An RNA of 207 nucleotides, treated with DMS and 2A3 and read out base by base. The reactions ran in a buffer of 150 mM KOAc, 10 mM MgCl2 and 150 mM bicine (pH 8.5), at 24 C. The data come from the RNA Mapping Database (RMDB), library M2RFPK.
RNA sequence: GGGAACGACUCGAGUAGAGUCGAAAAGUAUAAAAUCUGCAAGUAGUGCUAUUGUUGGAAUCACCGUACCUAUUUAGGUUUACGCUCCAAGAUCGCUGGAUAGCAGCCCUAUCAAUAUCUAGGAGAAAAAACCCAGGACUGUUCGCAGUCCUGGGAACAUGAUUACUACCUUCGGGUAGUAAUCAUGAAAAGAAACAACAACAACAAC
Reactivity to DMS in 0.01 (KOAc 150mM, MgCl2 10mM, bicine 150mM(pH8.5), 24C), signal-to-noise 2, nucleotides 027 to 156: g000u010a240u010a070a070a070a050u010c050u000g010c050a050a170g020u010a060g020u000g040c030u000a080u010u030g000u000u000g020g000a140a110u010c040a100c090c000g030u000a030c030c020u000a100u000u010u000a060g030g020u000u000u000a030c030g010c020u010c070c020a080a100g020a040u000c010g040c100u000g000g010a100u000a110g010c020a120g010c150c140c020u000a150u000c040a110a100u000a100u000c040u020a140g000g000a090g030a010a030a070a100a070a080c000c000c000a020g020g000a040c010u000g000u000u000c280g030c010a010g020u000c000c000u010g020g000g000a000a010
Reactivity to 2A3 in 0.01 (KOAc 150mM, MgCl2 10mM, bicine 150mM(pH8.5), 24C), signal-to-noise 4, nucleotides 027 to 156: g030u030a050u030a300a110a040a030u070c050u120g060c050a080a080g060u070a020g070u100g070c030u030a030u080u070g060u050u020g030g030a080a100u100c020a030c100c030g020u030a020c010c010u100a170u220u190u260a040g020g010u010u080u060a010c030g020c010u020c010c010a010a010g000a040u020c050g030c150u050g030g030a030u030a010g040c050a010g030c030c010c010u040a050u040c020a050a030u030a020u300c020u060a060g010g010a010g000a050a080a060a040a010a050c000c010c010a000g000g010a000c000u010g030u060u070c210g000c090a010g010u000c000c000u000g010g010g010a000a000